Source: RMDB library OK1LIB, as collected in RNAgym. The record gives the reactivity of an RNA of 177 nucleotides to DMS and 2A3. The RNA was probed in 150 mM KOAc, 10 mM MgCl2 and 150 mM bicine (pH 8.5) at 24 C. For 2A3, 1,064 sequencing reads were counted. For DMS the reverse transcriptase was MarathonRT. The DMS profile rests on 2,511 reads.
[RMDB]
RNA sequence: GGGAACGACUCGAGUAGAGUCGAAAAAACGAGGUAAUUGAAGCUGCACUUGAGGUGGCUCGGGGAAAUUUACAAUUUCGUGGCAACAGUAUUUAUUCUCAUUGAGUAUAGAUGUGUGAUUUUACUGCUCCAUAUCGAGGUUCGCCUCGAUAUGGAGAAAAGAAACAACAACAACAAC
Reactivity to DMS in 0.01 (KOAc 150mM, MgCl2 10mM, bicine 150mM(pH8.5), 24C), signal-to-noise 2, nucleotides 027 to 126: a080a030c050g000a010g000g030u020a040a020u000u020g030a080a060g010c030u020g010c050a010c080u020u000g010a110g010g000u030g000g010c050u000c050g000g020g000g000a050a050a070u020u070u000a040c150a120a080u000u020u020c060g010u000g000g020c050a020a160c070a070g000u030a040u000u000u000a020u000u000c000u000c020a160u000u030g000a080g000u020a090u000a060g010a030u000g010u000g000u000g040a150u000u010u030u000a010c020u000g030
Reactivity to 2A3 in 0.01 (KOAc 150mM, MgCl2 10mM, bicine 150mM(pH8.5), 24C), signal-to-noise 3, nucleotides 027 to 126: a000a000c180g000a050g070g060u170a060a030u120u140g050a050a020g050c030u100g000c050a000c130u140u200g000a060g270g010u020g030g030c000u020c040g000g000g000g000a000a120a000u100u090u080a060c090a040a060u040u100u090c120g000u060g030g000c020a080a010c000a000g010u000a070u050u030u010a150u180u020c000u000c000a090u160u300g070a100g070u090a050u060a160g050a150u020g060u000g050u020g210a290u090u030u000u040a090c010u010g060